This 177-nucleotide RNA was probed chemically with DMS and 2A3. Source: RMDB library OK1LIB, as collected in RNAgym. For DMS, 9,557 sequencing reads were counted. As a SHAPE reagent, 2A3 marks flexible, mostly unpaired nucleotides at the ribose 2'-OH.
RNA sequence: GGGAACGACUCGAGUAGAGUCGAAAAAGGUCGGCCGGUUGCGCGGUGGGCAGACACUGAUCGGCUUUCUAGCGCCCCGUAAUGCUGACAACUCGAUCGGCGCGCUGACCCAGGCCGGGGUGCAGGCCUUGCAACCAGAAUUCGUUCUGGUUGCAAGAAAAGAAACAACAACAACAAC
Reactivity to DMS in 0.01 (KOAc 150mM, MgCl2 10mM, bicine 150mM(pH8.5), 24C), signal-to-noise 4, nucleotides 027 to 126: a050g000g000u000c000g020g010c030c010g000g000u010u020g010c060g020c070g030g010u010g020g000g000c040a090g000a090c050a060c050u010g000a070u010c040g000g000c040u010u010u010c060u030a070g040c020g000c030c100c000c040g000u030a120a100u020g000c010u020g000a050c070a070a090c080u020c080g000a210u000c010g010g010c080g000c140g000c010u000g000a140c020c010c030a180g020g010c020c020g000g010g010g020u000g010c030a110g000g010c100
Reactivity to 2A3 in 0.01 (KOAc 150mM, MgCl2 10mM, bicine 150mM(pH8.5), 24C), signal-to-noise 6, nucleotides 027 to 126: a010g040g020u060c020g010g000c030c010g010g010u140u140g050c140g010c030g060g050u090g030g020g000c040a020g040a050c030a020c090u080g020a130u040c010g030g000c020u050u070u030c070u090a050g000c000g000c000c010c010c010g050u100a060a070u180g000c000u010g020a030c040a080a110c100u060c090g130a210u020c010g030g000c030g000c010g020c040u050g080a150c000c020c010a010g010g000c000c010g000g000g000g000u030g000c030a030g010g070c010